Chemical mapping of a 177-nucleotide RNA with 2A3 and DMS. The RNA was probed in 150 mM KOAc, 10 mM MgCl2 and 150 mM bicine (pH 8.5) at 24 C. 2A3 adducts were read by reverse transcription with SuperScript II with manganese. The data come from the RNA Mapping Database (RMDB), library RFM100.
RNA sequence: GGGAACGACUCGAGUAGAGUCGAAAAGCGCUAGCGGUCCUCGUGGUCUUCCAGGCCUAGCCGCCAUACACCCGCCCCCCACCGGCUUCCAACCACCCCAGCAGCACCUCUUCGGGCGUUCCAACGCUCCUUUCAAGAGGUUCGCCUCUUGAAAGGAAAAAGAAACAACAACAACAAC
Reactivity to 2A3 in 0.01 (KOAc 150mM, MgCl2 10mM, bicine 150mM(pH8.5), 24C), signal-to-noise 4, nucleotides 027 to 126: g060c050g010c060u030a020g020c020g050g050u060c010c020u050c040g090u090g020g050u030c030u180u060c110c050a050g000g050c010c020u020a020g010c030c010g010c030c000a060u100a060c040a050c020c010c000g020c000c000c000c000c000c000a010c010c000g020g000c000u040u040c030c010a030a040c000c000a020c010c000c000c000a010g020c020a010g030c000a040c010c010u010c000u030u010c000g000g000g020c010g000u020u000c010c000a030a020c040g030c030
Reactivity to DMS in 0.01 (KOAc 150mM, MgCl2 10mM, bicine 150mM(pH8.5), 24C), signal-to-noise 3, nucleotides 027 to 126: g010c070g010c070u020a070g010c060g000g010u010c040c000u000c070g040u030g010g000u010c050u000u020c030c050a120g000g020c020c000u010a090g000c040c040g000c020c050a050u010a120c070a090c040c030c000g020c050c010c020c010c000c010a070c080c040g000g000c050u020u000c060c060a080a120c050c050a090c050c010c000c010a060g020c120a080g000c040a050c040c000u020c020u010u010c030g000g000g000c030g000u000u010c010c000a140a070c150g040c090